[RMDB]
RNA sequence: GGGAACGACUCGAGUAGAGUCGAAAAGUGAUCGUGAACGUACGUUCGUACGAUCGUGUGUGUGUUCACACUCGAGUUCUCGAUCGAGUUCACUCGUACACGUACGAUCGUGAACGUGUGAACGUGAACACUCACUCUCUCGAGAACGAUCACGUUCACACACCGUGAAUUUCGAUUCACGGUGUGUAAAAGAAACAACAACAACAAC
Reactivity to 2A3 in 0.01 (KOAc 150mM, MgCl2 10mM, bicine 150mM(pH8.5), 24C), signal-to-noise 9, nucleotides 027 to 156: g080u050g020a090u070c050g010u030g020a040a010c020g020u060a010c020g040u070u160c100g020u120a060c020g020a040u040c050g000u010g000u000g000u000g000u000g000u010u020c010a010c020a030c070u020c020g030a030g090u290u100c110u080c120g110a140u020c030g000a000g010u040u030c020a010c020u030c000g010u060a020c010a000c020g050u200a100c180g050a160u200c000g010u000g000a020a000c000g000u010g010u010g000a020a010c030g000u000g000a000a000c000a000c000u010c010a010c000u030c010u000c010u010c020g090a120g000a020a000c000g000a010u080c050a000c020g010u070u070c010
Reactivity to DMS in 0.01 (KOAc 150mM, MgCl2 10mM, bicine 150mM(pH8.5), 24C), signal-to-noise 3, nucleotides 027 to 156: g000u000g000a040u000c000g020u000g000a060a140c010g010u000a080c060g020u000u010c100g010u000a050c010g010a060u000c040g010u000g000u010g020u000g000u000g010u000u000c010a080c070a300c070u000c010g000a090g020u000u010c130u000c090g010a110u000c020g000a160g010u010u000c030a020c040u000c000g040u000a090c010a010c050g030u000a150c170g000a060u000c060g010u020g010a060a030c000g010u000g000u000g010a010a090c130g000u000g010a030a050c020a070c010u000c010a050c030u000c050u000c110u000c040g000a110g000a150a050c040g020a100u010c040a020c020g000u000u000c010
Structure probing data (2A3 and DMS) for a 207-nucleotide construct. The RNA was probed in 150 mM KOAc, 10 mM MgCl2 and 150 mM bicine (pH 8.5) at 24 C. Values cover nucleotides 27 to 156. Source: RMDB library OK3TST, as collected in RNAgym. For DMS, 7,309 sequencing reads were counted.